[RMDB]
RNA sequence: GGGAACGACUCGAGUAGAGUCGAAAAAGGCUUGUUCUGCAACUCAUCGGCAGAUGUAAAAAUGCCAGUUAAAUAUAACUGCAAAAAAUACAAACACUUACGCAUUAGCAGCUUAAUAACCUGCCUGCGUGACCAGUCGCGAAUUGCUUGUGUUUGCCACUAUUCAAGAGUUCGCUCUUGAAUAGUGAAAAGAAACAACAACAACAAC
Reactivity to DMS in 0.01 (KOAc 150mM, MgCl2 10mM, bicine 150mM(pH8.5), 24C), signal-to-noise 2, nucleotides 027 to 156: a050g020g000c000u010u010g000u020u020c050u000g040c030a090a080c040u000c020a060u000c060g030g040c000a060g000a090u010g020u000a050a040a060a090a110u000g000c070c040a050g010u000u000a050a160a230u010a170u000a020a050c050u000g000c070a000a000a080a110a080a160u000a100c030a060a040a060c040a080c030u000u000a070c030g000c000a080u010u010a030g020c000a040g000c020u000u000a110a100u000a080a120c280c000u010g010c000c050u000g040c030g010u010g010a050c040c070a170g000u000c040g000c000g000a110a080u010u010g030c030u000u020g040u010g010u000u000u010g000c180
Reactivity to 2A3 in 0.01 (KOAc 150mM, MgCl2 10mM, bicine 150mM(pH8.5), 24C), signal-to-noise 5, nucleotides 027 to 156: a000g060g010c060u080u050g060u130u040c050u080g040c010a040a070c040u030c070a020u020c020g010g000c000a010g020a060u050g070u220a020a020a010a000a010u020g010c010c000a010g000u030u040a070a300a160u270a120u060a100a000c000u010g000c060a030a020a010a030a120a020u150a060c070a020a150a010c020a010c080u090u100a010c040g000c000a020u080u080a020g000c000a000g000c000u050u020a050a000u030a030a020c000c000u000g000c000c010u030g000c000g000u010g020a040c040c050a050g050u070c030g040c040g110a090a100u090u020g010c080u040u050g010u010g020u030u030u040g050c020